This 177-nucleotide RNA was probed chemically with 2A3 and DMS. The reactions ran in a buffer of 150 mM KOAc, 10 mM MgCl2 and 150 mM bicine (pH 8.5), at 24 C. The DMS profile rests on 4,271 reads. 2A3 adducts were read by reverse transcription with SuperScript II with manganese.

RNA sequence: GGGAACGACUCGAGUAGAGUCGAAAACGAGGCAUUACUAGUCAGUGCGACGUACCUUGACGGUACUGGAUUUCGCCCUUGGGUUAGGUUCGUCAGCAGGACUUAGCGGUAGUUUCCAAUUGGGCACGUUAAGAGACUCCUUCGGGAGUCUCUUAACAAAAGAAACAACAACAACAAC
Reactivity to 2A3 in 0.01 (KOAc 150mM, MgCl2 10mM, bicine 150mM(pH8.5), 24C), signal-to-noise 3, nucleotides 027 to 126: c030g020a090g010g040c060a070u050u220a060c020u110a020g010u070c010a020g040u020g070c000g020a070c030g020u000a030c000c010u030u300g130a050c120g030g030u070a050c010u030g010g060a090u040u060u090c070g000c000c000c000u020u100g030g030g000u050u030a020g050g000u030u000c000g060u020c050a050g040c040a050g030g040a020c000u000u030a010g000c000g000g030u000a000g070u050u060u040c000c000a030a090u140u160g030g030g000c000a000c070
Reactivity to DMS in 0.01 (KOAc 150mM, MgCl2 10mM, bicine 150mM(pH8.5), 24C), signal-to-noise 2, nucleotides 027 to 126: c050g030a140g000g010c020a060u020u010a090c050u020a020g000u040c020a010g020u000g010c000g000a100c120g000u000a020c000c000u000u020g070a070c110g010g000u000a040c060u010g020g010a220u010u030u040c060g020c000c000c000u000u010g000g010g010u000u000a060g000g010u000u000c040g030u030c090a100g050c030a130g000g000a040c030u000u010a040g010c110g010g030u020a020g010u000u000u020c000c020a070a080u010u050g000g000g040c030a050c200